[RMDB]
RNA sequence: GGGAACGACUCGAGUAGAGUCGAAAAGAUAUGGAGAUCAUGAAUCAGCGACGAAGAAAGUCGGAAACGACUUUCAGAGCUGUGGCAUGUAUCUCCUAAGUCAAAAGAUGAUAGUUCGCUAUCAUCACCGAUAGUGAAUCUUCGGAUUCACUAUCGGAAAAGAAACAACAACAACAAC
Reactivity to DMS in 0.01 (KOAc 150mM, MgCl2 10mM, bicine 150mM(pH8.5), 24C), signal-to-noise 2, nucleotides 027 to 126: g000a030u000a300u000g000g000a030g000a010u000c010a030u000g010a080a110u000c000a010g030c000g020a140c260g000a170a160g000a030a010a010g050u000c010g000g030a120a120a210c000g010a020c000u000u000u000c010a050g000a110g040c000u010g010u010g000g000c000a000u000g000u030a010u020c000u000c010c010u000a000a160g000u000c020a110a080a120a070g010a050u000g000a010u010a030g010u020u000c300g040c000u000a000u000c000a000u000c030a140
Reactivity to 2A3 in 0.01 (KOAc 150mM, MgCl2 10mM, bicine 150mM(pH8.5), 24C), signal-to-noise 2, nucleotides 027 to 126: g030a010u060a060u150g000g020a000g000a010u030c010a010u000g100a110a040u020c000a020g000c010g300a300c030g000a300a080g000a000a000a010g000u010c000g000g040a060a090a000c000g010a010c000u030u010u000c000a030g000a010g000c000u030g020u180g080g020c030a000u040g100u300a040u030c010u000c000c010u010a060a000g030u000c030a080a020a030a140g010a000u010g000a030u010a020g040u020u140c300g030c110u020a010u000c000a000u000c020a000
Structure probing data (DMS and 2A3) for a 177-nucleotide construct. The 2A3 profile rests on 2,452 reads. For DMS the reverse transcriptase was MarathonRT. Source: RMDB library TTRDES, as collected in RNAgym. Conditions: 150 mM KOAc, 10 mM MgCl2 and 150 mM bicine (pH 8.5), 24 C.